[RMDB]
RNA sequence: GGGAACGACUCGAGUAGAGUCGAAAAGUCUCUUACCGAAGAGCAUGCGCGUCUGAUCGAACGCCGAUCAUCCGCUUCUCCAAACGUUUACGCGACUGGACUGCUAUGCGUACGCGAAGGAGAAACGAUCAGGGACGCUGUAGACUUCGGCGCGCGCACUAGGCUGAAGGUUCGCCUUCAGCCUAGUAAAAGAAACAACAACAACAAC
Reactivity to 2A3 in 0.01 (KOAc 150mM, MgCl2 10mM, bicine 150mM(pH8.5), 24C), signal-to-noise 3, nucleotides 027 to 156: g050u010c020u000c010u050u070a160c050c100g120a080a030g020a020g000c080a050u180g000c020g010c020g130u020c040u180g010a110u010c000g040a090a040c110g070c070c010g050a070u070c010a060u060c020c050g000c010u020u000c000u010c000c050a120a300a170c020g030u030u070u000a020c000g000c070g100a110c080u100g080g210a090c030u150g070c000u130a100u300g000c020g000u020a000c060g010c000g010a070a130g000g000a000g000a000a000a000c010g010a030u020c110a090g000g040g000a030c010g000c040u060g000u060a040g030a050c040u060u040c050g020g010c010g010c000g030c000g080c020